[RMDB]
RNA sequence: GGGAACGACUCGAGUAGAGUCGAAAAUCAAGAUCCCUGAGCUUCUCGAAGUCGGCUUGCGAGAUAGUUUUGGGGCUUAGAGUCACCUUGACCGCCAAAUCAGCUAAAGCCCGCUGUCGCUUUGACAGCCGAUAGUCGGGUUCGCCCGACUAUCGGCAAAAGAAACAACAACAACAAC
Reactivity to 2A3 in 0.01 (KOAc 150mM, MgCl2 10mM, bicine 150mM(pH8.5), 24C), signal-to-noise 3, nucleotides 027 to 126: u030c050a070a000g070a170u120c000c000c000u050g010a000g000c010u010u020c000u020c040g050a120a170g100u120c080g100g230c070u020u050g080c010g000a020g040a030u050a060g040u030u060u050u140g010g000g000g010c030u050u090a040g030a040g120u070c000a080c080c000u010u050g120a090c010c020g030c040c020a080a160a050u080c010a000g090c050u160a110a090a000g020c010c010c040g020c020u060g010u070c030g050c160u070u150u180g060a030c010a050

An RNA of 177 nucleotides, treated with 2A3 and read out base by base. The reactions ran in a buffer of 150 mM KOAc, 10 mM MgCl2 and 150 mM bicine (pH 8.5), at 24 C. The 2A3 profile rests on 862 reads.